[RMDB]
RNA sequence: GGGAACGACUCGAGUAGAGUCGAAAAAAUAAGAGUGCUUAAAGCAGGCUUCAAAUGCCUGAUUAUUAUGUGCUUGGGAUAAUGAAAUAAGACCUCUGUUCUGCUUUCAUUGGAUUUCAGAUCAAGACUUUAUGUCUACCUUCGGGUAGACAUAAAGAAAAGAAACAACAACAACAAC
Reactivity to DMS in 0.01 (KOAc 150mM, MgCl2 10mM, bicine 150mM(pH8.5), 24C), signal-to-noise 6, nucleotides 027 to 126: a060a050u030a060a090g000a020g040u000g010c040u010u000a030a020a080g000c010a010g010g000c000u000u020c300a070a140a100u020g000c000c000u000g000a050u020u010a070u000u000a020u000g010u000g000c020u000u010g000g010g000a090u030a040a040u020g000a050a040a040u020a100a030g000a070c050c160u030c150u010g000u020u000c010u000g000c130u000u000u000c010a070u000u000g010g000a140u010u010u010c080a060g010a120u020c090a060a090g000a180
Reactivity to 2A3 in 0.01 (KOAc 150mM, MgCl2 10mM, bicine 150mM(pH8.5), 24C), signal-to-noise 6, nucleotides 027 to 126: a030a000u300a020a030g020a010g000u050g010c010u030u040a020a010a030g010c010a000g010g000c010u150u110c160a130a090a070u130g000c000c000u000g010a020u000u070a100u040u010a010u040g010u010g010c000u010u030g050g030g030a060u110a100a060u130g100a100a080a030u130a040a060g090a070c010c040u040c070u050g040u070u010c020u010g060c030u040u050u030c040a100u040u160g140g020a030u030u100u040c050a030g020a060u050c050a100a010g030a030
An RNA of 177 nucleotides, treated with DMS and 2A3 and read out base by base.
The RNA was probed in 150 mM KOAc, 10 mM MgCl2 and 150 mM bicine (pH 8.5) at 24 C.
For 2A3 the reverse transcriptase was SuperScript II with manganese.
Values are in units of 0.01, from 0 to 300, in steps of 10.